The data come from the RNA Mapping Database (RMDB), library OK1LIB. The record gives the reactivity of an RNA of 177 nucleotides to 2A3 and DMS. Values cover nucleotides 27 to 126. Conditions: 150 mM KOAc, 10 mM MgCl2 and 150 mM bicine (pH 8.5), 24 C.
RNA sequence: GGGAACGACUCGAGUAGAGUCGAAAAAAGGAACAAAUACUUCUAACCAGGUUGCUGUUCUUUAUCAGGAUGUUAACUGCACAGAAGUCCCUGUUGCUAUUCAUGCAGAUCAACUUACUCCUACUAAAUGGUAGCAUCCAUUCGUGGAUGCUACCAUAAAAGAAACAACAACAACAAC
Reactivity to 2A3 in 0.01 (KOAc 150mM, MgCl2 10mM, bicine 150mM(pH8.5), 24C), signal-to-noise 1, nucleotides 027 to 126: a000a000g040g000a080a000c020a010a070a070u050a050c000u000u050c000u080a000a070c030c100a020g000g000u020u020g050c050u040g000u030u000c000u000u050u010a110u020c030a010g020g000a080u140g000u000u050a000a110c000u060g000c120a000c050a140g030a040a000g000u050c060c050c000u270g080u230u070g140c050u000a080u000u200c000a000u000g030c020a000g010a070u080c040a000a000c000u040u000a000c000u000c090c000u040a070c000u020a080a080
Reactivity to DMS in 0.01 (KOAc 150mM, MgCl2 10mM, bicine 150mM(pH8.5), 24C), signal-to-noise 2, nucleotides 027 to 126: a060a030g010g000a060a000c020a010a110a110u000a060c000u020u000c080u000a120a190c290c270a120g050g000u000u000g050c190u000g030u000u000c030u000u000u000a050u040c130a030g000g040a020u010g000u000u020a030a120c060u020g000c010a030c250a100g020a070a070g020u010c010c050c020u030g000u000u000g000c030u000a070u000u000c090a120u020g000c000a080g010a070u040c090a030a020c130u000u000a000c060u000c020c000u020a110c260u000a020a080